[RMDB]
Source: RMDB library OK2TRN, as collected in RNAgym. An RNA of 177 nucleotides, treated with DMS and 2A3 and read out base by base. For 2A3 the reverse transcriptase was SuperScript II with manganese. Reactivities are given for positions 27 through 126. The 2A3 profile rests on 5,727 reads. In probing experiments dimethyl sulfate is read out at A N1 and C N3, which are open when not base-paired. The reactions ran in a buffer of 150 mM KOAc, 10 mM MgCl2 and 150 mM bicine (pH 8.5), at 24 C.
RNA sequence: GGGAACGACUCGAGUAGAGUCGAAAAGUCGGUCUUCAUUGCGCGCGAGAGCGGCGGUGCAAUCGCGGACCUGCCUGAACGCGUGGCGCUUUCGGUUAUGACGAUCGGUGAGCUGCAACUCGGUCUGGUUCCUGUAUUUCUUCGGAAAUACAGGAACAAAAGAAACAACAACAACAAC
Reactivity to DMS in 0.01 (KOAc 150mM, MgCl2 10mM, bicine 150mM(pH8.5), 24C), signal-to-noise 3, nucleotides 027 to 126: g020u000c110g020g000u000c020u000u010c010a050u000u010g030c030g030c030g040c020g010a130g000a090g010c100g010g000c020g000g000u000g010c070a060a060u000c100g050c070g000g000a080c050c030u010g010c040c020u000g000a090a100c090g010c040g010u000g010g040c020g000c040u000u000u000c060g010g010u020u010a060u000g000a080c140g010a040u000c030g000g000u000g000a050g010c000u010g020c040a090a080c020u000c020g010g030u000c050u010g030
Reactivity to 2A3 in 0.01 (KOAc 150mM, MgCl2 10mM, bicine 150mM(pH8.5), 24C), signal-to-noise 4, nucleotides 027 to 126: g040u030c020g040g010u020c050u030u040c030a030u030u090g030c060g000c010g000c030g030a080g030a020g170c070g100g010c020g070g040u110g000c030a050a080u120c100g020c060g100g020a020c000c020u040g030c000c010u040g030a100a020c020g010c000g020u040g060g020c030g020c010u030u050u040c030g060g010u070u050a110u180g100a060c100g010a030u040c000g000g040u120g040a020g020c030u090g030c060a000a060c030u010c020g010g030u010c030u060g110